The data come from the RNA Mapping Database (RMDB), library OK2TRN. An RNA of 177 nucleotides, treated with DMS and 2A3 and read out base by base. The RNA was probed in 150 mM KOAc, 10 mM MgCl2 and 150 mM bicine (pH 8.5) at 24 C. For DMS, 2,077 sequencing reads were counted.
[RMDB]
RNA sequence: GGGAACGACUCGAGUAGAGUCGAAAAUCAGCAGGGGCUGAGCUGGUUCAUGUCUUCUGUUGCCCCAUACACAUGUGGCUCUCUAGUGGAGGAGGUGUUAGCCACAGUGAUUUGCACAAUCACUCACACCCCUUCAACUGUUCGCAGUUGAAGGGGUAAAAGAAACAACAACAACAAC
Reactivity to DMS in 0.01 (KOAc 150mM, MgCl2 10mM, bicine 150mM(pH8.5), 24C), signal-to-noise 2, nucleotides 027 to 126: u000c020a010g020c000a070g000g000g030g060c000u000g000a030g010c180u010g010g010u000u000c030a000u020g020u000c010u000u000c010u000g010u000u000g020c100c000c000c100a120u000a120c110a050c090a110u020g040u000g000g000c010u000c030u010c020u000a100g000u000g000g020a180g000g020a020g000g010u000g000u020u000a060g000c000c000a020c040a020g030u000g000a090u000u000u000g030c200a130c220a060a050u000c070a050c050u020c100a130c170
Reactivity to 2A3 in 0.01 (KOAc 150mM, MgCl2 10mM, bicine 150mM(pH8.5), 24C), signal-to-noise 3, nucleotides 027 to 126: u120c010a000g030c010a020g020g000g060g000c010u020g020a010g040c100u220g240g040u090u020c020a040u150g040u030c000u160u020c000u070g020u060u050g060c010c000c000c010a040u110a030c080a000c030a070u060g000u010g000g000c010u000c000u020c030u180a100g160u090g300g060a180g060g020a030g000g050u090g050u190u200a020g020c000c000a000c000a020g010u000g050a190u040u040u250g100c070a040c030a090a050u070c020a030c100u060c010a060c020